[RMDB]
RNA sequence: GGGAACGACUCGAGUAGAGUCGAAAAUAAAAUAGCGUACUAGAGACGCUGAUCUCUAGAUAACUACGAACUCUAGAGAUACGGUCCAAUUGUAUACAAGGACAGUUGGACCUAUUCGUAGAAAAAACUCCAGUGUAAAGUUCGCUUUACACUGGAGAAAAGAAACAACAACAACAAC
Reactivity to 2A3 in 0.01 (KOAc 150mM, MgCl2 10mM, bicine 150mM(pH8.5), 24C), signal-to-noise 1, nucleotides 027 to 126: u160a000a110a020a040u150a050g000c000g000u000a010c010u020a070g020a030g010a090c010g000c080u000g040a090u010c000u050c000u010a010g040a070u120a120a020c000u010a000c030g000a020a010c010u010c020u050a010g030a020g010a050u050a120c020g030g000u010c000c000a000a000u000u000g020u030a090u030a190c110a080a010g300g020a010c000a020g000u000u000g000g000a000c000c000u000a030u000u040c000g000u000a000g010a030a020a030a050a050a050
Reactivity to DMS in 0.01 (KOAc 150mM, MgCl2 10mM, bicine 150mM(pH8.5), 24C), signal-to-noise 1, nucleotides 027 to 126: u010a060a080a060a140u000a060g000c020g000u000a110c020u000a110g000a110g040a000c000g020c020u000g000a030u000c000u010c000u000a000g000a030u000a100a070c000u000a000c010g000a050a160c150u000c000u020a000g010a230g010a060u000a040c160g000g050u000c000c000a020a020u000u000g010u000a020u000a150c300a080a160g040g000a010c000a000g000u010u010g000g010a020c000c010u020a000u000u000c000g010u000a020g000a000a120a050a060a100a070
Conditions: 150 mM KOAc, 10 mM MgCl2 and 150 mM bicine (pH 8.5), 24 C. The record gives the reactivity of an RNA of 177 nucleotides to 2A3 and DMS. For DMS, 742 sequencing reads were counted. For DMS the reverse transcriptase was MarathonRT. 2A3 adducts were read by reverse transcription with SuperScript II with manganese. It was measured as part of the RMDB library M2PK90.